[RMDB]
RNA sequence: GGGAACGACUCGAGUAGAGUCGAAAAUUGUGGUCAAGACCUUGGCGUAGUAUCCAAGGUUGUCAAGGUUCCUAUUGACUUAACAAUGAUUGAGUUUAUGUUAUGGUGUAAGGAUGGACUGGGGAAAGUUUAGAGGUUGAUUCGUCAACCUCUAAACAAAAGAAACAACAACAACAAC
Reactivity to 2A3 in 0.01 (KOAc 150mM, MgCl2 10mM, bicine 150mM(pH8.5), 24C), signal-to-noise 3, nucleotides 027 to 126: u020u030g030u050g030g040u040c020a040a020g020a000c000c000u000u000g000g000c050g060u090a050g040u060a130u080c020c020a040a000g000g000u010u030g000u000c010a020a040g060g010u020u030c000c020u030a090u020u060g010a010c000u050u100a070a020c040a070a100u100g040a160u090u150g040a070g150u020u100u060a100u110g050u090u030a070u150g070g000u060g010u050a070a000g020g020a030u070g000g030a030c030u020g000g010g000g020a050a080a070
Reactivity to DMS in 0.01 (KOAc 150mM, MgCl2 10mM, bicine 150mM(pH8.5), 24C), signal-to-noise 7, nucleotides 027 to 126: u000u010g030u000g000g010u000c050a060a090g010a030c000c000u010u000g010g010c220g010u000a150g010u010a130u000c040c040a030a030g010g010u000u010g010u000c070a070a060g010g000u000u000c050c070u000a140u000u000g000a020c010u000u000a090a040c030a040a040u000g000a130u010u010g000a080g010u000u000u000a050u020g010u000u000a070u000g000g010u000g010u000a050a060g010g010a070u000g000g000a060c040u000g000g010g000g010a070a070a090
Source information
Source: RMDB library M2PK90, as collected in RNAgym. Chemical mapping of a 177-nucleotide RNA with 2A3 and DMS. For DMS the reverse transcriptase was MarathonRT.